Chemical mapping of a 177-nucleotide RNA with DMS and 2A3.
For 2A3 the reverse transcriptase was SuperScript II with manganese.
It was measured as part of the RMDB library M2PK50.
The DMS profile rests on 1,117 reads.
RNA sequence: GGGAACGACUCGAGUAGAGUCGAAAACGUGAUGUGUUCGCACAUCACGAAACUUUGAAGCCGGGAAACACGGCAACCGGCAUCAAAGCCGAGUAACAAAGAAAACGCCUGACUUCGGUCAGGCGAAGGAAUAUUGCAUGUUCGCAUGCAAUAUUCCAAAAGAAACAACAACAACAAC
Reactivity to DMS in 0.01 (KOAc 150mM, MgCl2 10mM, bicine 150mM(pH8.5), 24C), signal-to-noise 2, nucleotides 027 to 126: c010g010u000g000a010u010g030u020g010u000u000c200g030c010a020c000a010u000c010a010c010g000a010a090a150c000u000u000u000g010a070a100g020c010c000g010g000g000a090a080a070c040a040c150g000g000c240a050a020c030c000g000g020c000a060u000c020a010a060a030g020c060c010g000a100g020u020a150a080c110a080a070a050g000a050a120a120a170c010g000c000c000u000g000a030c000u000u010c170g030g000u000c000a010g010g010c000g000a010a010
Reactivity to 2A3 in 0.01 (KOAc 150mM, MgCl2 10mM, bicine 150mM(pH8.5), 24C), signal-to-noise 1, nucleotides 027 to 126: c010g030u000g010a000u000g020u000g050u010u010c100g050c110a010c010a000u010c010a000c000g000a020a000a000c010u000u020u000g010a050a000g000c000c000g030g010g040a000a100a000c100a010c070g030g010c000a000a010c010c000g000g000c010a010u020c020a000a020a020g000c000c010g030a080g090u130a120a060c060a090a120a020g090a040a110a010a000c010g000c000c020u000g000a000c000u000u100c300g070g000u000c000a000g000g040c000g000a010a010